[RMDB]
RNA sequence: GGGAACGACUCGAGUAGAGUCGAAAACAAACAACAAAACAAACAGUAGGGAAGAAGAGAAAGUGACGGUACCUGCAGAAGAAGCGCCGGCUAACAACGUAACAGCAGACGCAGUAAACAAACAAAAGCAUCGCUAGCACUUCGGUGCUAGUGAUGCAAAAGAAACAACAACAACAAC
Reactivity to DMS in 0.01 (KOAc 150mM, MgCl2 10mM, bicine 150mM(pH8.5), 24C), signal-to-noise 2, nucleotides 027 to 126: c200a000a050a090c140a070a160c110a070a070a160a160c170a030a060a110c100a180g050u020a070g010g000g000a040a060g010a000a020g000a050g000a060a040a010g000u060g000a010c000g040g030u010a090c180c040u010g040c110a140g000a160a080g000a080a120g000c080g000c020c000g010g000c090u010a010a240c050a080a150c050g030u090a110a010c110a050g000c030a020g040a020c150g020c030a120g000u010a020a040a020c150a050a050a180c150a020a020a170a050
Reactivity to 2A3 in 0.01 (KOAc 150mM, MgCl2 10mM, bicine 150mM(pH8.5), 24C), signal-to-noise 3, nucleotides 027 to 126: c050a020a120a000c070a000a050c030a020a070a000a010c110a060a160a040c060a120g040u100a020g050g050g010a060a030g020a090a010g080a010g050a000a070a000g100u090g040a010c020g020g020u000a100c000c020u020g040c030a000g030a090a000g040a050a050g000c000g000c030c010g000g000c000u040a140a010c050a020a000c050g100u090a010a010c000a020g030c010a000g000a030c030g020c000a000g010u250a030a040a000c090a030a010a010c070a040a090a000a000
An RNA of 177 nucleotides, treated with DMS and 2A3 and read out base by base. Source: RMDB library OK1LIB, as collected in RNAgym. The 2A3 profile rests on 2,419 reads.